The record gives the reactivity of an RNA of 207 nucleotides to 2A3. 2A3 adducts were read by reverse transcription with SuperScript II with manganese. The RNA was probed in 150 mM KOAc, 10 mM MgCl2 and 150 mM bicine (pH 8.5) at 24 C.

RNA sequence: GGGAACGACUCGAGUAGAGUCGAAAACGCAUCUACCCCUUCCCAUGCGGACCGCGUUCAGUGCGAGCUGUCUGAACUUCCGUGGCACAUUAUCAGCGUAGGGAUGGUUGAUGGUAAGCCCGCCUUCGGUACACCUGGAUAUUGCAAGCCAUGUGGAACGGUACUGCCUAUUCGUAGGCAGUACCGUAAAAGAAACAACAACAACAAC
Reactivity to 2A3 in 0.01 (KOAc 150mM, MgCl2 10mM, bicine 150mM(pH8.5), 24C), signal-to-noise 1, nucleotides 027 to 156: c050g020c020a030u060c020u090a130c000c000c000c000u000u070c000c000c060a040u100g030c000g010g000a060c030c040g020c030g000u080u000c110a050g050u300g210c080g020a160g040c040u150g130u020c020u040g020a060a020c000u060u000c020c010g000u010g080g120c040a040c000a130u090u270a050u080c020a040g000c010g040u060a130g000g010g000a020u040g020g000u000u030g010a010u050g020g020u030a020a000g000c040c010c010g020c010c070u030u150c030g040g050u070a040c040a000c000c040u000g000g000a010u010a060u140u230g060c080a060a040g000c000c000a050u040g010u010g110g000a000